[RMDB]
RNA sequence: GGGAACGACUCGAGUAGAGUCGAAAAACCCGAAGAGGAAAGAAGGACGCGGACGCGAACCUGUGAGUGGAAACCCGCUUUAUUCACUGGGGUCGACAACUCUGGGGAGAGAAGGGAGGAUCGGAUGCAAGAUAUCUUUGUUCGCAAAGAUAUCUUGAAAAGAAACAACAACAACAAC
Reactivity to DMS in 0.01 (KOAc 150mM, MgCl2 10mM, bicine 150mM(pH8.5), 24C), signal-to-noise 4, nucleotides 027 to 126: a070c010c000c010g040a080a070g000a090g000g000a080a050a060g000a080a050g020g010a080c100g020c050g010g020a100c130g000c050g000a060a110c030c030u000g030u000g020a020g020u000g000g000a080a080a120c040c010c030g000c160u000u000u010a050u010u000c110a040c090u000g000g000g000g000u010c040g000a100c140a060a080c040u010c030u000g000g000g010g010a070g000a050g000a040a050g000g000g000a040g010g010a060u000c070g010g000a090u010g000
Reactivity to 2A3 in 0.01 (KOAc 150mM, MgCl2 10mM, bicine 150mM(pH8.5), 24C), signal-to-noise 2, nucleotides 027 to 126: a010c010c010c010g020a060a020g040a040g000g040a020a030a100g030a040a030g030g010a030c060g000c070g100g000a030c050g010c000g050a050a100c020c010u050g000u040g080a030g000u030g040g000a000a030a110c010c010c000g160c070u110u170u120a190u130u140c080a070c150u080g020g030g010g000u030c010g040a040c040a140a030c010u000c040u040g020g000g010g000a040g000a010g010a050a060g000g030g020a040g040g000a000u040c030g040g050a010u100g050

This 177-nucleotide RNA was probed chemically with DMS and 2A3. DMS (dimethyl sulfate) methylates the pairing face of unpaired adenines and cytosines. Source: RMDB library VIROID, as collected in RNAgym. The RNA was probed in 150 mM KOAc, 10 mM MgCl2 and 150 mM bicine (pH 8.5) at 24 C.